[RMDB]
RNA sequence: GGGAACGACUCGAGUAGAGUCGAAAACAUACUAGUUUUCUAGUAUGAGGAUCCUUUUGGAUCCGAACGACGGUUUGUCUCUACCAGCUUUUUUUGCUCCGUCGGGCUCAUCUGCUUUUGGACUUUUGUCCUUGCAGAUGUGUCAGGGUAGGACAUACAUCCUAAUGAUCUUCGGAUCAUUAGGAUGAAAAGAAACAACAACAACAAC
Reactivity to 2A3 in 0.01 (KOAc 150mM, MgCl2 10mM, bicine 150mM(pH8.5), 24C), signal-to-noise 4, nucleotides 027 to 156: c000a000u010a000c010u010a010g140u150u140u220u230c000u010a010g000u010a000u010g010a050g000g010a010u000c010c000u150u230u230u300g000g000a000u000c000c010g040a090a030c030g000a000c000g010g020u070u140u130g010u020c060u000c000u260a000c010c010a010g070c050u190u160u060u130u110u300u300g000c010u030c000c000g010u000c010g000g000g000c000u000c000a000u000c000u000g010c010u060u170u170u210g000g000a000c000u080u160u200u300g000u000c000c000u000u010g000c000a000g000a000u000g010u020g010u000c020a010g060g000g000u000a000g010g000a000c000a000u080a010

Chemical mapping of a 207-nucleotide RNA with 2A3. Reactivities are given for positions 27 through 156. As a SHAPE reagent, 2A3 marks flexible, mostly unpaired nucleotides at the ribose 2'-OH. The RNA was probed in 150 mM KOAc, 10 mM MgCl2 and 150 mM bicine (pH 8.5) at 24 C. For 2A3 the reverse transcriptase was SuperScript II with manganese.